This 207-nucleotide RNA was probed chemically with 2A3 and DMS. It was measured as part of the RMDB library OK3TST. The reactions ran in a buffer of 150 mM KOAc, 10 mM MgCl2 and 150 mM bicine (pH 8.5), at 24 C.
RNA sequence: GGGAACGACUCGAGUAGAGUCGAAAACACUUGCCGUCAGGGAUUCGCAAUAUGCCAUCUUCAGUUAAUUAAGGCUGAUUACCUUAGGAACCAAAAGAAGAAUAUCAACUAAGAAUUCGUGUCGUGAAGUUGUGGUGACGCAACUAUAACUGACGAAUAAAUAUCCAGGUUUCGACCUGGAUAUUUAAAAAGAAACAACAACAACAAC
Reactivity to 2A3 in 0.01 (KOAc 150mM, MgCl2 10mM, bicine 150mM(pH8.5), 24C), signal-to-noise 4, nucleotides 027 to 156: c040a020c040u060u120g050c040c000g040u040c030a040g000g030g050a060u050u080c010g010c070a070a090u090a070u240g080c050c020a060u020c000u020u020c000a020g020u070u280a030a020u100u030a020a010g010g000c000u010g030a050u050u200a040c000c010u010u010a000g010g040a050a030c020c010a010a060a030a050g030a010a010g030a030a010u090a050u200c050a040a100c050u130a080a040g060a100a050u030u030c020g000u040g060u090c050g030u030g050a050a040g010u030u010g010u000g030g060u060g000a030c020g000c010a000a020c020u020a030u080a140a070c040u060g020a010c010g010a020a040
Reactivity to DMS in 0.01 (KOAc 150mM, MgCl2 10mM, bicine 150mM(pH8.5), 24C), signal-to-noise 3, nucleotides 027 to 156: c050a140c160u000u010g030c050c020g030u000c000a040g010g000g010a090u000u000c010g030c070a040a080u000a050u010g000c010c140a140u000c000u000u000c100a280g020u000u000a050a140u000u010a030a030g020g010c010u010g020a300u000u000a010c020c020u000u000a030g020g010a060a080c020c080a040a070a030a130g020a130a050g020a050a130u000a150u000c040a050a150c110u000a090a130g000a060a040u000u010c000g020u000g030u000c040g000u000g010a150a090g000u000u000g040u010g010g010u000g020a300c020g010c010a000a000c010u010a050u000a110a060c010u000g020a040c000g000a100a150
Record summary
DMS adducts were read by reverse transcription with MarathonRT.